[RMDB]
RNA sequence: GGGAACGACUCGAGUAGAGUCGAAAAAAGGCCACCCUAUUUAUUUUUUCACUGCUUGUAAACAACGUCUCACUUCAAUAGUGUCUCCUUCAUGUACUGAGAUACUGCUGCAAGCGAAAUAUCACGAGACUCACUAGUCAUUCGUGACUAGUGAGUCAAAAGAAACAACAACAACAAC
Reactivity to DMS in 0.01 (KOAc 150mM, MgCl2 10mM, bicine 150mM(pH8.5), 24C), signal-to-noise 2, nucleotides 027 to 126: a120a020g010g010c020c010a090c020c010c020u000a020u040u000u080a030u000u020u050u000u000u000c000a080c050u030g000c060u000u030g020u060a000a040a150c150a070a080c200g000u020c030u000c000a110c080u010u000c050a010a040u010a020g020u020g010u000c000u020c020c030u000u000c090a060u030g010u040a020c200u010g020a020g010a050u010a010c010u000g040c040u000g000c020a050a050g000c020g010a080a010a070u010a040u010c130a090c040g010a300
Reactivity to 2A3 in 0.01 (KOAc 150mM, MgCl2 10mM, bicine 150mM(pH8.5), 24C), signal-to-noise 4, nucleotides 027 to 126: a010a010g070g000c020c000a020c000c000c020u010a060u030u110u000a080u030u070u020u030u040u080c050a050c060u110g030c030u030u040g040u070a080a120a030c050a080a100c110g050u040c030u000c040a060c020u150u080c100a050a090u070a150g020u040g020u030c000u010c010c000u080u090c060a100u140g040u160a090c070u050g010a000g010a020u040a030c020u040g050c010u000g000c000a030a000g000c010g090a030a090a020u240a070u110c040a040c080g050a080